[RMDB]
RNA sequence: GGGAACGACUCGAGUAGAGUCGAAAAAUUACGGGCGGCGCAGGUGGAGCUGCGAUCCGUCCGCCCAUCGCGUGCUCUCUCGGUGGCCCAGACGCUGCAAACGGACAGGCGGGCCACCUGCAACGAAACUGCACCUCUUAUUCGUAAGAGGUGCAGUAAAAGAAACAACAACAACAAC
Reactivity to DMS in 0.01 (KOAc 150mM, MgCl2 10mM, bicine 150mM(pH8.5), 24C), signal-to-noise 3, nucleotides 027 to 126: a050u060u010a250c040g010g000g010c010g000g000c020g020c010a010g000g010u000g030g000a230g010c010u000g020c010g010a070u010c010c010g000u010c020c000g010c030c020c010a170u010c070g020c070g010u000g000c020u000c100u010c150u000c120g000g010u000g000g000c010c000c000a100g030a100c080g010c010u000g020c090a100a150a170c280g000g000a180c020a090g010g010c090g020g000g000c000c000a010c000c010u000g020c020a080a030c050g000a090a090
Reactivity to 2A3 in 0.01 (KOAc 150mM, MgCl2 10mM, bicine 150mM(pH8.5), 24C), signal-to-noise 2, nucleotides 027 to 126: a000u190u120a040c020g020g000g000c000g000g010c000g010c030a020g000g060u140g110g100a090g070c000u000g020c000g030a060u030c000c000g000u010c010c010g030c000c010c000a040u060c080g090c030g060u050g030c010u020c010u000c010u020c150g000g020u000g000g010c000c000c000a050g040a050c130g020c180u020g040c050a090a220a140c050g090g150a070c020a000g020g020c000g000g000g000c010c000a010c010c000u000g000c000a010a020c000g020a090a060
An RNA of 177 nucleotides, treated with DMS and 2A3 and read out base by base. Source: RMDB library M2PK90, as collected in RNAgym. DMS adducts were read by reverse transcription with MarathonRT.